[RMDB]
RNA sequence: GGGAACGACUCGAGUAGAGUCGAAAACUUUUUCGCUGGUGUAAACAUGAUGUUCUUUUUCCUCCUAUUCAGGCUCGCACCUAAAAGUUAGGGCGGGCCUGCUUUUUUUGAACAAUAAUUGGUGUAACUAAAGUGUAUGGUUCGCCAUACACUUUAGAAAAGAAACAACAACAACAAC
Reactivity to DMS in 0.01 (KOAc 150mM, MgCl2 10mM, bicine 150mM(pH8.5), 24C), signal-to-noise 3, nucleotides 027 to 126: c080u010u010u000u010u010c130g020c050u000g020g010u010g010u010a080a060a100c090a050u000g000a100u000g000u000u000c000u000u010u000u000u010c050c100u000c030c020u000a060u000u000c010a010g010g010c000u000c000g010c000a160c000c000u000a010a080a150a190g000u000u000a000g000g000g010c000g000g000g000c010c000u000g000c000u000u000u000u010u010u010u010g000a030a040c070a060a070u010a070a120u000u000g000g010u000g010u000a080a150
Reactivity to 2A3 in 0.01 (KOAc 150mM, MgCl2 10mM, bicine 150mM(pH8.5), 24C), signal-to-noise 1, nucleotides 027 to 126: c030u130u080u040u130u140c010g010c030u090g100g050u020g080u090a090a130a020c030a080u100g050a050u170g120u020u060c000u030u110u000u050u010c000c000u080c010c030u030a090u030u020c000a010g020g010c030u000c000g000c030a300c060c020u080a110a120a090a110g070u090u020a010g000g000g000c000g030g000g010c000c000u020g010c000u030u050u020u000u000u000u050g080a070a010c000a090a030u110a100a030u020u070g120g000u130g020u030a050a020